[RMDB]
RNA sequence: GGGAACGACUCGAGUAGAGUCGAAAACGCCUUAAGCGGCGGGUAGAUCUCGGAGGCUUGCCACAAGCCUUCACCGGUGCGAGCACCUGGGUUGUGUUCGCAGCGCGCCUGGUCUCCAGUGUGGGUGGUGUACAGGUCCAUUCGUGGACCUGUACACAAAAGAAACAACAACAACAAC
Reactivity to 2A3 in 0.01 (KOAc 150mM, MgCl2 10mM, bicine 150mM(pH8.5), 24C), signal-to-noise 4, nucleotides 027 to 126: c030g010c010c000u150u170a210a040g100c080g040g000c000g000g000g050u130a090g020a090u010c060u020c130g000g000a000g030g000c020u040u030g060c070c000a080c020a050a020g000c000c000u000u040c000a010c010c040g050g090u020g010c000g030a020g000c000a010c050c130u280g290g000g070u260u150g010u020g010u020u000c020g000c030a000g010c020g000c020g030c000c040u020g000g030u040c050u000c020c050a070g020u030g000u070g130g080g030u100g040
Reactivity to DMS in 0.01 (KOAc 150mM, MgCl2 10mM, bicine 150mM(pH8.5), 24C), signal-to-noise 1, nucleotides 027 to 126: c060g000c000c000u000u060a280a040g030c170g010g000c010g010g020g000u020a000g040a060u020c050u010c030g020g000a080g020g020c000u000u060g040c130c070a020c070a130a100g000c000c000u000u000c050a140c120c030g030g000u000g020c030g000a050g000c030a000c030c000u000g000g020g020u080u000g030u010g000u000u000c010g000c010a020g000c000g040c200g000c020c000u010g020g010u030c030u050c020c110a190g000u000g040u000g020g030g000u010g010